[RMDB]
RNA sequence: GGGAACGACUCGAGUAGAGUCGAAAAGAAAGAAAGAAAGCGCGCAUGCCGCCGUCUACGGCCUGCGCGCCGUCCUGCAGCACCCGCCCGAUCUGGCACAGGGCGGGAGGAGAGAAGAGAGAAGAAAACUUAAUCAUUAUUUCGAUAAUGAUUAAGUAAAAGAAACAACAACAACAAC
Reactivity to DMS in 0.01 (KOAc 150mM, MgCl2 10mM, bicine 150mM(pH8.5), 24C), signal-to-noise 4, nucleotides 027 to 126: g000a120a080a100g000a090a110a100g010a090a200a110g020c030g060c050g030c030a010u000g000c020c020g040c100c120g000u000c110u020a180c050g000g010c000c040u010g020c060g050c020g000c010c030g020u000c020c010u000g010c060a110g020c120a180c020c000c000g020c010c000c020g000a190u020c050u010g000g000c060a070c090a260g010g000g040c000g010g010g000a010g020g010a150g000a070g020a040a050g010a030g000a080g010a070a070g000a080a060a070
Reactivity to 2A3 in 0.01 (KOAc 150mM, MgCl2 10mM, bicine 150mM(pH8.5), 24C), signal-to-noise 3, nucleotides 027 to 126: g060a000a050a000g070a010a100a010g050a020a080a000g030c020g000c000g000c010a030u040g010c020c020g080c080c030g110u030c090u100a030c030g000g020c000c020u010g020c020g010c000g000c010c000g000u030c000c000u020g020c010a020g040c020a050c000c010c000g010c000c000c000g050a100u070c040u110g060g000c090a060c080a130g000g000g000c000g000g000g000a010g010g020a010g010a000g010a100a010g030a000g020a020g030a080a020g040a030a100a000